[RMDB]
RNA sequence: GGGAACGACUCGAGUAGAGUCGAAAAGACACGACGGAGACGUCGUGUCAAGUCCAGUGCGAAAGCACUGGACAAAUAAGGGCUGUUUCUCUCGCUGACUUUCAGCCCCAAACAAAAACUGUCAGCACAGUAGUGCUGGUUUCGACCAGCACUACUGAAAAGAAACAACAACAACAAC
Reactivity to 2A3 in 0.01 (KOAc 150mM, MgCl2 10mM, bicine 150mM(pH8.5), 24C), signal-to-noise 2, nucleotides 027 to 126: g000a010c000a000c000g000a010c000g000g040a060g000a060c000g000u000c010g010u000g000u000c000a000a000g000u030c000c000a010g020u000g000c010g070a130a050a040g000c000a000c030u010g010g020a010c010a010a010a000u140a080a070g000g000g000c010u010g020u020u010u000c130u000c040u060c100g000c000u000g010a000c000u010u030u010c020a000g000c000c000c020c030a010a010a010c010a010a010a010a020a010c100u050g020u010c000a000g030c030a010
Reactivity to DMS in 0.01 (KOAc 150mM, MgCl2 10mM, bicine 150mM(pH8.5), 24C), signal-to-noise 2, nucleotides 027 to 126: g010a000c000a000c000g000a000c010g010g000a240g020a230c010g000u000c000g010u000g010u000c000a050a120g000u000c020c000a010g000u020g010c000g000a080a080a210g020c000a000c010u000g020g020a010c000a020a030a020u030a160a200g000g000g010c000u000g000u000u000u000c130u020c150u010c120g030c000u000g000a040c000u010u000u000c050a010g020c000c000c000c190a030a000a220c020a020a000a020a020a060c240u000g000u000c000a000g000c000a300